RNA sequence: GGGAACGACUCGAGUAGAGUCGAAAAGAAAACCGCGCAAGUCACACAAUCGCGCGGAUAUGGCACGCACGCUUCUGCCGGGCAGCAUACAUGUCCGAUUGUGUCAAUGCGCGGAAAAGAAAGAAAAAUGACGGAUCCUAUUCGUAGGAUCCGUCAUAAAAGAAACAACAACAACAAC
Reactivity to 2A3 in 0.01 (KOAc 150mM, MgCl2 10mM, bicine 150mM(pH8.5), 24C), signal-to-noise 2, nucleotides 027 to 126: g220a000a050a000a080c000c000g080c000g030c020a050a000g040u070c050a000c000a010c000a000a000u010c010g000c000g010c050g190g000a000u040a000u000g120g010c180a000c110g000c000a010c090g010c070u160u110c130u300g100c120c000g000g010g010c030a000g040c020a030u030a080c030a000u050g050u020c000c010g000a000u000u000g000u010g000u030c080a070a000u040g000c000g000c010g000g020a000a000a000a080g040a000a000a030g050a010a000a000a000
Reactivity to DMS in 0.01 (KOAc 150mM, MgCl2 10mM, bicine 150mM(pH8.5), 24C), signal-to-noise 2, nucleotides 027 to 126: g000a210a000a040a160c000c010g020c000g000c000a020a040g000u040c300a000c010a010c010a000a000u000c080g000c300g000c110g020g030a050u000a000u000g100g000c160a100c170g050c060a040c090g020c030u060u010c060u000g060c040c030g000g010g000c000a150g000c040a060u000a300c180a150u040g000u000c110c000g000a030u010u000g000u000g000u010c030a050a100u000g030c000g010c000g010g000a000a010a070a060g000a030a110a060g030a020a080a060a110